Source: RMDB library POS240, as collected in RNAgym. An RNA of 307 nucleotides, treated with DMS and 2A3 and read out base by base. The reactions ran in a buffer of 150 mM KOAc, 10 mM MgCl2 and 150 mM bicine (pH 8.5), at 24 C. The 2A3 profile rests on 1,595 reads. For 2A3 the reverse transcriptase was SuperScript II with manganese.
RNA sequence: GGGAACGACUCGAGUAGAGUCGAAAAAGCGUGAGAAACACGCAAAGUGGAGAACCACAAUGGCAAGGCUGACAUAGCUUUUACUGAUCUGUCUGUUUAGUGAGUGGACAGGAUGCCAGUCUGGCAGUUUGCAUUGGCAAUAAAUCACUACUAGACAUUUUAUUUAAAAUCUGGCACUGGCUUGGGAGAGGUGAGGGAUUGUCAAUUUGUUUUUAUUUUGAGGCCAGGCACAAUCAUAACACAAACAGGCCACCUGGAAACAAAAGAGGUUGUCAUUCGUGACAACCAAAAGAAACAACAACAACAAC
Reactivity to DMS in 0.01 (KOAc 150mM, MgCl2 10mM, bicine 150mM(pH8.5), 24C), signal-to-noise 2, nucleotides 027 to 266: a070g000c000g030u010g010a250g050a240a130a190c040a000c010g030c000a060a020a100g050u000g000g020a180g010a130a090c070c010a020c100a060a060u020g010g030c050a080a090g000g000c020u000g020a120c090a070u010a080g010c100u010u010u020u000a090c180u010g030a090u010c000u000g000u010c030u000g000u000u000u050a050g030u000g010a070g010u000g000g000a060c080a050g010g010a140u000g000c020c020a090g000u000c080u020g020g000c020a050g010u000u010u010g030c030a100u010u000g010g000c000a010a010u000a040a050a040u020c060a010c000u000a020c070u000a040g010a030c000a040u010u010u010u010a060u010u030u010a070a040a040a070u010c040u000g010g020c060a090c170u000g010g000c040u010u000g060g000g000a080g040a070g000g000u000g000a030g000g000g000a030u010u000g000u000c070a060a070u010u000u010g010u010u030u010u010u000a050u010u020u010u000g010a050g000g030c000c020a040g000g000c070a040c080a030a090u000c120a060u000a140a130c150a060c090a060a090a110c090a060g000g000c070c040a040c050c010u020g010g000a130a050a040c030a050a070a060a070g000a110
Reactivity to 2A3 in 0.01 (KOAc 150mM, MgCl2 10mM, bicine 150mM(pH8.5), 24C), signal-to-noise 1, nucleotides 027 to 266: a010g020c020g010u050g010a270g050a050a100a020c000a020c000g000c000a000a100a000g000u010g020g060a050g000a090a030c050c000a050c040a060a130u030g020g010c030a070a040g010g000c020u020g030a050c020a130u190a050g020c020u080u120u060u200a110c070u060g100a090u090c020u000g020u000c000u000g050u030u130u070a050g010u030g200a030g090u130g010g050a040c030a020g060g020a000u040g000c000c000a020g040u050c030u020g060g080c000a060g050u180u200u220g060c040a040u060u000g000g000c000a000a000u020a030a120a010u130c030a020c050u110a040c000u010a030g000a040c000a030u020u270u130u160a100u020u120u080a070a090a060a020u000c010u030g030g000c060a020c080u020g030g020c010u010u040g030g030g010a030g020a070g000g010u020g000a020g000g040g000a030u060u050g040u060c010a040a040u000u010u040g030u000u040u050u090u220a190u030u130u050u070g020a000g000g030c000c010a000g060g000c030a040c020a010a000u040c020a030u070a180a010c050a010c040a130a190a020c030a030g010g030c040c010a030c030c010u030g010g000a080a080a000c060a010a100a020a040g090a000